[RMDB]
RNA sequence: GGGAACGACUCGAGUAGAGUCGAAAACAUGAGCUUCAAUCGGAGCAACUGCUCAAUGAUUGCUCAAUUGAAGAGUUUAAAGAAGAGCUUCCAAGUCAACAACCACGGUUUAUUCUACUCAGUUGGAACGUGGUAGCAUGUUCGCAUGCUACCACGUAAAAGAAACAACAACAACAAC
Reactivity to 2A3 in 0.01 (KOAc 150mM, MgCl2 10mM, bicine 150mM(pH8.5), 24C), signal-to-noise 1, nucleotides 027 to 126: c000a080u100g080a000g120c010u000u020c010a030a060u060c110g200g020a010g000c020a050a030c060u150g000c020u140c270a030a230u240g060a240u030u000g000c000u010c020a000a000u020u000g040a050a020g020a000g000u000u050u200a170a140a040g020a040a000g000a000g030c040u110u000c020c000a000a020g050u060c030a040a060c020a040a070c130c070a030c050g000g100u080u130u080a070u070u020c010u050a030c020u030c040a010g050u060u050g110g010a090
Reactivity to DMS in 0.01 (KOAc 150mM, MgCl2 10mM, bicine 150mM(pH8.5), 24C), signal-to-noise 1, nucleotides 027 to 126: c100a100u010g010a130g020c050u000u010c040a050a000u000c100g000g000a000g010c010a040a020c070u000g020c260u010c220a100a110u030g010a100u000u000g020c000u020c000a210a010u000u000g000a000a040g000a070g030u000u020u010a040a090a090g010a120a080g000a190g000c040u010u000c020c030a000a130g020u000c050a020a070c120a070a130c110c070a120c150g000g050u000u000u020a020u050u000c030u000a010c020u020c000a050g010u010u040g010g020a050